The record gives the reactivity of an RNA of 177 nucleotides to 2A3 and DMS. 2A3 adducts were read by reverse transcription with SuperScript II with manganese. Conditions: 150 mM KOAc, 10 mM MgCl2 and 150 mM bicine (pH 8.5), 24 C.
RNA sequence: GGGAACGACUCGAGUAGAGUCGAAAAAACCGUAAAUUCGUUUACGGUUAACCGCAACCGAGCCGAAAGGGAUUUUAUGCGUACGGUGGCGAAAGCCUAAAAUACCAUAGGCCUUCGGGCCUAUGAACAUUAAUAGUUUUUUCGAAAACUAUUAAUGAAAAGAAACAACAACAACAAC
Reactivity to 2A3 in 0.01 (KOAc 150mM, MgCl2 10mM, bicine 150mM(pH8.5), 24C), signal-to-noise 3, nucleotides 027 to 126: a000a010c020c000g000u020a040a030a060u070u080c150g050u090u000u010a000c010g000g000u000u020a030a020c040c010g000c020a020a020c010c010g030a010g020c020c020g100a060a020a020g090g000g000a030u110u030u050u090a130u190g020c020g040u050a090c010g030g040u000g010g030c000g050a120a000a020g000c000c000u060a120a090a030a020u160a080c040c000a010u000a000g000g000c000c010u010u030c180g060g010g020c000c000u010a010u000g010a000a000
Reactivity to DMS in 0.01 (KOAc 150mM, MgCl2 10mM, bicine 150mM(pH8.5), 24C), signal-to-noise 5, nucleotides 027 to 126: a030a010c010c000g020u000a010a010a030u000u010c140g010u000u000u000a010c010g000g000u000u000a040a110c100c010g020c060a070a060c050c010g000a250g010c010c080g010a020a040a050g000g010g000a150u010u000u000u010a060u010g010c090g000u000a080c070g010g010u000g010g020c010g010a070a070a120g010c000c010u000a030a040a070a110u000a070c140c010a020u000a000g010g010c000c000u000u010c160g030g000g010c000c000u000a000u000g000a070a140